Notes: This 177-nucleotide RNA was probed chemically with 2A3 and DMS. DMS (dimethyl sulfate) methylates the pairing face of unpaired adenines and cytosines. The DMS profile rests on 1,803 reads. 2A3 adducts were read by reverse transcription with SuperScript II with manganese. Conditions: 150 mM KOAc, 10 mM MgCl2 and 150 mM bicine (pH 8.5), 24 C. Reactivities are given for positions 27 through 126. 2A3 is a SHAPE reagent: it acylates the 2'-hydroxyl of flexible nucleotides of all four kinds.
[RMDB]
RNA sequence: GGGAACGACUCGAGUAGAGUCGAAAAGAUAUGGACGCCCAAGGGAGCUGAACAAUAGUCGGAAACGACCAGCUUUGAUCUUGGCGUCCUAAGUCAAAAUCACGGGAGACUUCGGUCUCCCGUGAAAGUAUUCUAAGGAGUUCGCUCCUUAGAAUACAAAAGAAACAACAACAACAAC
Reactivity to 2A3 in 0.01 (KOAc 150mM, MgCl2 10mM, bicine 150mM(pH8.5), 24C), signal-to-noise 1, nucleotides 027 to 126: g030a010u060a140u140g010g020a020c030g020c030c090c100a010a010g020g040g000a030g000c010u000g010a230a020c090a270a280u180a130g000u020c000g050g000a080a100a020c000g030a010c000c000a000g000c000u210u180u080g020a050u050c010u020u010g000g000c000g000u000c000c010u000a020a000g020u000c000a000a020a000a300u050c000a000c040g000g060g000a020g040a010c020u180u150c300g090g000u000c000u050c000c000c000g000u020g000a000a000a000
Reactivity to DMS in 0.01 (KOAc 150mM, MgCl2 10mM, bicine 150mM(pH8.5), 24C), signal-to-noise 2, nucleotides 027 to 126: g000a030u020a300u000g010g000a000c000g000c190c030c040a010a010g010g010g000a000g030c000u000g000a190a200c200a070a060u000a120g030u010c000g000g000a120a110a220c000g000a010c010c000a020g000c000u000u000u000g000a050u010c000u000u000g000g000c010g020u000c000c000u010a010a060g010u010c040a090a080a120a180u000c000a010c000g010g000g000a020g000a030c000u010u010c170g020g020u000c000u000c000c000c000g010u000g000a000a010a090